[RMDB]
RNA sequence: GGGAACGACUCGAGUAGAGUCGAAAAGGCUUGUAUGGUUCAGGUUACCUGCGGUAGCAUGACUCUUAAUGGUCUUUGGCUUGACAACACAGUCUGGUGCCCACGACACGUAAUGUGCCCGGCUGACGAUAAUUGUGUACUUCGGUACACAAUUAUCAAAAGAAACAACAACAACAAC
Reactivity to 2A3 in 0.01 (KOAc 150mM, MgCl2 10mM, bicine 150mM(pH8.5), 24C), signal-to-noise 5, nucleotides 027 to 126: g010g000c020u050u040g080u140a050u120g020g000u040u040c020a020g030g020u020u020a020c010c010u140g150c130g040g020u010a010g000c020a020u030g020a020c010u010c000u100u100a060a040u100g000g000u000c000u030u020u020g050g000c020u040u070g030a030c030a120a020c030a030c010a090g010u000c030u070g000g010u070g020c020c010c010a020c030g050a020c010a000c040g080u110a140a080u140g010u020g030c020c050c010g050g000c010u020g020a050c060
Reactivity to DMS in 0.01 (KOAc 150mM, MgCl2 10mM, bicine 150mM(pH8.5), 24C), signal-to-noise 5, nucleotides 027 to 126: g000g010c010u000u000g000u010a050u010g000g010u000u010c030a020g010g010u010u000a050c040c030u010g030c220g020g000u000a030g010c010a060u000g000a030c020u000c050u000u000a080a210u000g010g010u000c030u000u000u000g010g000c020u010u010g010a060c080a050a080c170a130c150a050g000u010c020u000g000g000u000g000c010c050c030a090c100g000a060c070a040c090g010u000a100a070u010g010u000g010c020c020c110g000g010c050u000g000a200c200